The record gives the reactivity of an RNA of 170 nucleotides to DMS and 2A3. 2A3 adducts were read by reverse transcription with SuperScript II with manganese. For DMS the reverse transcriptase was MarathonRT. The RNA was probed in 150 mM KOAc, 10 mM MgCl2 and 150 mM bicine (pH 8.5) at 24 C. For DMS, 4,209 sequencing reads were counted. For 2A3, 2,226 sequencing reads were counted.

[RMDB]
RNA sequence: GGGAACGACUCGAGUAGAGUCGAAAAUAAUAAAUUGUUAGCCAAGAAGGAGCUUUCAGGCCAGUGCUUUAAAAUACUCUAUAAGGGCAAUGUGACGCAUGAUGCUAGCUCUGCCAUUAAUAGACCAAGACCGUUGCCUUCGGGCAACGGAAAAGAAACAACAACAACAAC
Reactivity to DMS in 0.01 (KOAc 150mM, MgCl2 10mM, bicine 150mM(pH8.5), 24C), signal-to-noise 3, nucleotides 027 to 129: u030a020a120u040a060a030a110u050u000g000u020u020a110g010c040c000a080a230g000a100a000g040g000a020g000c040u030u030u020c000a130g000g000c000c130a000g040u030g050c120u000u030u010a030a060a110a130u010a150c160u050c080u000a000u050a090a030g000g020g130c000a020a010u000g090u020g050a250c040g000c030a020u050g000a090u030g100c010u020a050g000c090u000c070u000g020c000c000a000u000u030a090a030u040a070g000a000c080c050a100a000g090a100
Reactivity to 2A3 in 0.01 (KOAc 150mM, MgCl2 10mM, bicine 150mM(pH8.5), 24C), signal-to-noise 1, nucleotides 027 to 129: u200a040a000u090a030a050a000u130u150g080u000u100a010g000c000c000a020a050g040a000a000g140g020a090g000c020u060u060u030c000a000g020g000c000c000a030g000u000g110c040u000u080u080a030a000a000a040u060a070c010u000c070u080a010u030a060a010g010g000g000c010a010a030u000g030u020g000a000c130g000c060a100u120g010a110u200g140c000u030a000g040c000u000c060u110g020c010c000a040u020u030a020a110u000a030g030a000c000c000a060a010g020a010